[RMDB]
RNA sequence: GGGAACGACUCGAGUAGAGUCGAAAACAAUAGUCCUGAGCACAUCGGGAAGCUCGGUCGAGUUCAUGAGAGCGGGUUUGGGCGGCCUGAUGAUCUUGACACUCUGUCUCUGCUGCGGCGGGAUUGAACGGGCAUGCGAGUUCGCUCGCAUGCCCGUAAAAGAAACAACAACAACAAC
Reactivity to 2A3 in 0.01 (KOAc 150mM, MgCl2 10mM, bicine 150mM(pH8.5), 24C), signal-to-noise 2, nucleotides 027 to 126: c060a010a090u100a210g150u040c060c000u020g050a000g000c200a050c010a100u070c070g040g000g000a000a030g050c020u010c040g000g000u010c000g070a020g030u100u080c000a030u190g190a030g010a080g190c050g030g000g010u130u290u150g150g070g000c060g000g010c000c010u000g010a010u030g030a070u060c030u070u080g020a040c060a000c030u050c000u040g100u070c000u010c130u160g100c090u020g000c000g090g020c000g020g000g000a000u000u100g010a020